Annotation:
Structure probing data (2A3 and DMS) for a 177-nucleotide construct.
RNA sequence: GGGAACGACUCGAGUAGAGUCGAAAAAUUCGCCAAACGCGAGGUGAGCAUCGCCGAGGUGCGCCAGGAGGGCGUUGUGGACGAAGGUGGUCGACGGGUGGGAGCCCGAAUCGUGGUGGUCACGCACCGUGGUGCUGUUUUUCGAAACAGCACCACGAAAAGAAACAACAACAACAAC
Reactivity to 2A3 in 0.01 (KOAc 150mM, MgCl2 10mM, bicine 150mM(pH8.5), 24C), signal-to-noise 1, nucleotides 027 to 126: a010u030u010c010g010c050c000a000a060a040c020g010c020g050a050g010g040u100g100a050g000c020a020u030c030g110c120c120g110a080g000g030u050g030c020g000c000c000a050g130g060a100g040g160g000c030g010u020u040g080u040g030g020a080c040g030a020a030g050g060u080g000g020u090c070g050a030c010g030g000g020u040g030g050g020a050g010c000c070c000g000a030a030u080c000g040u100g040g040u070g000g000u100c040a000c050g020c010a030c020
Reactivity to DMS in 0.01 (KOAc 150mM, MgCl2 10mM, bicine 150mM(pH8.5), 24C), signal-to-noise 3, nucleotides 027 to 126: a210u000u000c020g010c010c030a020a100a060c110g000c020g010a130g020g000u010g000a110g040c040a040u010c050g020c120c120g000a240g000g000u000g000c040g000c040c040a170g020g000a190g010g000g020c030g010u000u000g010u010g020g000a090c050g000a060a050g000g020u020g010g010u010c050g010a110c080g020g000g030u000g010g010g000a130g010c000c010c010g020a080a040u010c100g030u000g010g000u000g000g010u000c070a080c200g010c090a050c110

It was measured as part of the RMDB library OK2TRN.
For DMS the reverse transcriptase was MarathonRT.